[RMDB]
RNA sequence: GGGAACGACUCGAGUAGAGUCGAAAAUACUUCUGUUCGCAGAAGUAGGACGGCAGGCCGCCGGCCGUAACAGGCGGCCAUCGGAUCACGCUCCGGUGAAAGGCUCGGUUGAAGUUUCGACUUCAACGUACGAGCAAUUAUUCGUAAUUGCUCGUACAAAAGAAACAACAACAACAAC
Reactivity to DMS in 0.01 (KOAc 150mM, MgCl2 10mM, bicine 150mM(pH8.5), 24C), signal-to-noise 6, nucleotides 027 to 126: u000a010c010u000u000c000u000g010u000u020c200g020c000a020g000a020a010g010u000a010g000g010a300c070g000g010c010a030g010g010c000c000g000c000c000g010g000c010c000g000u000a010a020c020a170g010g000c000g010g010c010c000a000u000c010g010g010a030u000c190a150c250g010c300u000c000c000g010g020u010g000a080a120a120g010g010c120u000c120g020g010u000u000g000a010a020g010u000u000u010c220g010a050c010u000u000c010a010a010c020
Reactivity to 2A3 in 0.01 (KOAc 150mM, MgCl2 10mM, bicine 150mM(pH8.5), 24C), signal-to-noise 1, nucleotides 027 to 126: u010a000c000u000u000c000u000g030u020u090c240g020c080a000g000a010a000g000u000a000g050g110a020c010g000g000c010a020g070g000c000c010g000c000c000g000g000c010c010g030u070a010a000c030a080g010g040c000g010g000c000c000a000u010c000g000g010a010u090c030a010c220g040c090u010c000c000g020g010u020g010a070a010a010g120g010c080u090c140g080g010u000u000g000a000a010g010u000u070u240c190g060a030c020u020u000c020a010a000c010